[RMDB]
RNA sequence: GGGAACGACUCGAGUAGAGUCGAAAAGAUAUGGAUCCCGAAGGGAGCUGCGUCGGAAACGACCUAGCAUCGAUCUUCCGGAUCCUAAGUCAAAAGGAAUUCAGUAAGUUCGCUUACUGAAUUCCAACAAUCCGGGUUACUUCGGUAACCCGGAUUGAAAAGAAACAACAACAACAAC
Reactivity to DMS in 0.01 (KOAc 150mM, MgCl2 10mM, bicine 150mM(pH8.5), 24C), signal-to-noise 1, nucleotides 027 to 126: g020a020u020a300u000g010g000a000u010c000c000c150g000a020a030g010g010g010a100g030c010u000g020c300g000u000c000g040g000a040a040a140c000g000a030c030c010u000a010g030c000a150u000c110g020a070u000c010u010u000c000c300g010g000a020u000c000c000u010a000a100g000u010c020a070a120a120a120g000g000a010a040u000u000c000a010g000u000a000a000g010u010u020c200g010c020u000u000a000c000u000g010a000a000u000u000c000c020a050a080